[RMDB]
An RNA of 170 nucleotides, treated with DMS and 2A3 and read out base by base. 2A3 adducts were read by reverse transcription with SuperScript II with manganese. It was measured as part of the RMDB library 15KLIB.
RNA sequence: GGGAACGACUCGAGUAGAGUCGAAAAUCCUCCCUCUUCGUCCUUCUUCUUUCUCAACAUUCCGACGAUGUUUCCCAGCCAGGGGUUUUCAUCCUCAAGUUUCUUGAUCUUCUUGUUGAUUCGCCGGUAAGAUGUGCGUUCGCGCACAUCAAAAGAAACAACAACAACAAC
Reactivity to DMS in 0.01 (KOAc 150mM, MgCl2 10mM, bicine 150mM(pH8.5), 24C), signal-to-noise 3, nucleotides 027 to 129: u000c000c010u010c040c000c030u020c000u030u010c040g000u000c060c020u000u000c030u040u030c050u000u030u010c020u050c090a000a000c080a220u020u020c070c010g050a000c190g040a080u050g030u030u000u020c000c080c000a010g000c100c120a070g000g000g000g000u000u000u140u030c050a130u000c030c030u030c110a080a120g050u000u000u000c020u040u010g020a100u030c030u040u010c020u020u020g010u020u010g030a100u010u030c060g040c050c060g020g030u000a070a080
Reactivity to 2A3 in 0.01 (KOAc 150mM, MgCl2 10mM, bicine 150mM(pH8.5), 24C), signal-to-noise 3, nucleotides 027 to 129: u040c000c000u010c020c000c000u000c000u020u040c030g050u010c010c000u000u020c000u030u020c000u000u070u010c040u000c000a000a050c010a100u120u060c040c000g000a030c040g020a050u070g000u000u020u060c030c020c000a010g040c070c030a030g020g000g020g000u000u030u000u050c020a060u040c020c000u040c020a060a060g030u030u050u060c000u040u040g090a050u040c040u070u030c000u030u080g050u030u010g040a110u100u000c000g000c020c000g010g010u020a040a020